[RMDB]
RNA sequence: GGGAACGACUCGAGUAGAGUCGAAAACGACAAGUUGACAGCUUGCGAGAGGAAAGAAUUGUGGUGCGGAUUGAUUUUUGGGAAGUCGGUUCCAUGUACCCUAGUGGCCAUUUUGUCCGCUCCCUGGCUUGCACCCGAGGUUCGCCUCGGGUGCAAGAAAAGAAACAACAACAACAAC
Reactivity to DMS in 0.01 (KOAc 150mM, MgCl2 10mM, bicine 150mM(pH8.5), 24C), signal-to-noise 1, nucleotides 027 to 126: c030g060a220c060a050a000g000u000u010g030a160c260a300g000c000u020u010g000c050g000a060g020a020g000g010a060a040a140g000a110a090u040u000g000u000g000g000u000g010c080g010g000a060u000u000g000a090u040u000u000u000u000g030g000g000a040a080g000u010c000g000g000u000u000c000c070a000u030g000u000a110c030c050c010u080a070g030u030g000g000c300c000a020u000u000u000u000g030u030c030c000g060c060u000c010c000c030u000g000g010
Reactivity to 2A3 in 0.01 (KOAc 150mM, MgCl2 10mM, bicine 150mM(pH8.5), 24C), signal-to-noise 2, nucleotides 027 to 126: c110g050a050c000a010a010g010u130u080g060a040c020a040g080c000u000u020g000c020g020a140g060a090g020g090a070a050a070g080a040a110u130u060g030u120g000g000u070g000c020g010g000a010u030u030g010a000u040u270u120u130u090g070g000g100a120a000g040u150c040g050g040u090u020c050c010a050u070g060u140a160c040c000c040u020a000g030u050g030g090c030c000a000u000u020u000u180g020u000c050c000g040c000u000c060c000c000u020g020g010